[RMDB]
RNA sequence: GGGAACGACUCGAGUAGAGUCGAAAAGCUGACCUCCACUGGGUGGAUUAAGGUCAAGGUAUGAAGUCCUAUUCGCUCCUGAUAGGAACGACUUCAUAUUGCUUAUAUGUGUGCUGAUGCACACAUAGACCUGUGAUCGGUUCGCCGAUCACAGGUCAAAAGAAACAACAACAACAAC
Reactivity to 2A3 in 0.01 (KOAc 150mM, MgCl2 10mM, bicine 150mM(pH8.5), 24C), signal-to-noise 1, nucleotides 027 to 126: g000c000u000g000a000c000c010u020c030c000a000c070u300g190g270g000u000g000g050a050u160u070a000a080g000g000u010c010a000a020g110g010u000a000u000g000a000a010g010u000c010c010u040a070u000u090c050g050c090u040c040c050u130g030a070u140a070g070g040a020a030c040g070a010c020u000u010c010a000u000a030u020u050g040c020u070u210a120u010a000u120g020u000g030u010g000c000u090g140a190u300g000c070a000c000a000c000a010u010a020
Chemical mapping of a 177-nucleotide RNA with 2A3.
It was measured as part of the RMDB library RFMREP.
2A3 adducts were read by reverse transcription with SuperScript II with manganese.